[RMDB]
RNA sequence: GGGAACGACUCGAGUAGAGUCGAAAAGCCAUGAGUUUCGACUCAUGGCAAAAGCGCGUCACCGCUACGAUGCAAGCGCAAGCGCGUCCAUCGUAAAUGACAAAAUUCUCGGGUUCGCCCGAGAAAAAGUCAGCUAUGAAUUCGUUCAUAGCUGACUAAAAGAAACAACAACAACAAC
Reactivity to 2A3 in 0.01 (KOAc 150mM, MgCl2 10mM, bicine 150mM(pH8.5), 24C), signal-to-noise 2, nucleotides 027 to 126: g000c000c000a000u000g000a000g010u110u050u210c200g030a020c000u000c010a000u000g000g000c000a000a020a010a000g010c000g010c020g000u010c020a170c300c060g000c040u010a010c000g000a020u020g000c060a080a090g000c000g000c060a100a180g210c110g000c010g090u060c020c010a010u010c000g000u010a020a020a050u010g000a000c000a000a070a020a120u040u000c000u000c000g000g020g000u030u050c160g070c050c000c010g010a000g030a000a000a000a000
Reactivity to DMS in 0.01 (KOAc 150mM, MgCl2 10mM, bicine 150mM(pH8.5), 24C), signal-to-noise 2, nucleotides 027 to 126: g020c010c000a020u000g000a010g000u000u000u020c180g010a090c030u020c000a010u000g000g020c010a020a010a050a100g020c020g010c090g000u000c010a030c230c040g010c010u000a030c020g010a010u000g000c050a160a140g010c030g030c030a130a130g010c150g000c040g010u020c280c030a020u000c020g000u000a080a130a060u000g000a050c000a140a100a050a110u010u010c000u000c000g010g000g000u000u000c180g020c000c010c000g000a000g000a000a010a020a150
Structure probing data (2A3 and DMS) for a 177-nucleotide construct. The reactions ran in a buffer of 150 mM KOAc, 10 mM MgCl2 and 150 mM bicine (pH 8.5), at 24 C. Values cover nucleotides 27 to 126. Reactivities are rounded to 0.1 and cut off at 0 and 3. The 2A3 profile rests on 3,342 reads.